[RMDB]
RNA sequence: GGGAACGACUCGAGUAGAGUCGAAAAACCUGCAGAGAUGUAGGCCCCCUUGUGGUCGGUGUACAGGUGGUGCAUGGCUGUCGUCAGCUCGUGUCGUGAGAUGUUGGGUUAAGUCCCGCAACGAGCGCGAUACUCCAGGGUUCGCCCUGGAGUAUCGAAAAGAAACAACAACAACAAC
Reactivity to DMS in 0.01 (KOAc 150mM, MgCl2 10mM, bicine 150mM(pH8.5), 24C), signal-to-noise 3, nucleotides 027 to 126: a180c010c020u010g000c010a020g000a150g000a160u010g030u000a020g000g000c050c000c010c060c060u030u010g030u040g010g000u000c060g000g040u010g020u000a050c110a040g020g020u000g030g000u000g000c030a080u000g000g050c080u020g000u010c030g020u020c090a110g010c010u030c030g000u010g000u000c060g030u020g000a100g010a040u000g020u010u010g000g030g000u000u000a060a170g000u020c010c020c020g000c200a080a070c100g020a100g000c130g020
Reactivity to 2A3 in 0.01 (KOAc 150mM, MgCl2 10mM, bicine 150mM(pH8.5), 24C), signal-to-noise 3, nucleotides 027 to 126: a010c020c010u000g010c020a020g010a020g000a060u030g040u030a000g000g010c000c000c000c000c000u090u100g080u120g050g020u030c030g040g030u040g030u050a060c010a060g000g130u070g050g010u040g100c030a030u070g030g040c010u040g030u070c000g040u040c000a010g000c020u010c010g060u080g050u070c060g020u110g060a120g010a070u140g030u230u260g020g000g050u130u020a160a060g300u130c000c000c000g020c010a050a050c020g000a010g070c030g000
Notes:
An RNA of 177 nucleotides, treated with DMS and 2A3 and read out base by base. The RNA was probed in 150 mM KOAc, 10 mM MgCl2 and 150 mM bicine (pH 8.5) at 24 C. The DMS profile rests on 4,315 reads. For 2A3 the reverse transcriptase was SuperScript II with manganese. The 2A3 profile rests on 1,431 reads.